The record gives the reactivity of an RNA of 207 nucleotides to 2A3 and DMS.
2A3 adducts were read by reverse transcription with SuperScript II with manganese.
For DMS, 12,883 sequencing reads were counted.
It was measured as part of the RMDB library RNAMAK.
The RNA was probed in 150 mM KOAc, 10 mM MgCl2 and 150 mM bicine (pH 8.5) at 24 C.
The 2A3 profile rests on 12,289 reads.
DMS adducts were read by reverse transcription with MarathonRT.
RNA sequence: GGGAACGACUCGAGUAGAGUCGAAAACGAGCGUUCGCGCUCGGGGGAUCCUAAGUCAGUCUCGUUUGACGAAUUAGGGAGUUCAUGGUCGGAAACGACCAGAACGAAGAACUAAUUCCGAGAGACUGAUAUGGAAACGUACGCAUUUCGAUGCGAAGAUAUACAACCCAUUCGUGGGUUGUAUAUCAAAAGAAACAACAACAACAAC
Reactivity to 2A3 in 0.01 (KOAc 150mM, MgCl2 10mM, bicine 150mM(pH8.5), 24C), signal-to-noise 9, nucleotides 027 to 156: c020g000a000g000c010g020u170u170c300g010c000g020c120u000c010g000g000g000g020g000a070u030c010c010u040a130a030g010u000c000a000g000u000c000u010c010g160u130u260u290g090a080c040g000a000a000u010u000a010g000g030g000a050g000u000u010c150a280u210g000g000u000c010g010g030a080a080a130c010g000a010c010c000a000g000a000a000c010g040a130a020g010a010a000c000u000a000a000u000u000c010c020g060a040g000a000g000a090c000u010g000a000u010a020u020g010g020a070a100a010c060g080u180a050c010g020c010a010u080u170u210c200g120a010u030g000c030g030a060a030
Reactivity to DMS in 0.01 (KOAc 150mM, MgCl2 10mM, bicine 150mM(pH8.5), 24C), signal-to-noise 4, nucleotides 027 to 156: c010g020a020g040c000g030u000u000c280g040c030g030c010u000c000g000g010g020g030g010a160u000c010c000u000a080a300g020u000c000a020g020u000c000u000c030g010u000u000u000g020a170c100g000a020a020u000u000a030g000g010g000a250g000u000u000c030a150u000g040g010u010c010g020g000a140a130a300c000g020a020c000c000a010g010a030a010c010g000a080a200g020a130a170c020u000a010a020u000u000c010c010g010a190g010a040g010a030c010u000g000a010u010a130u000g000g000a070a100a100c060g010u010a110c010g000c040a080u000u000u010c180g030a070u000g010c020g010a130a210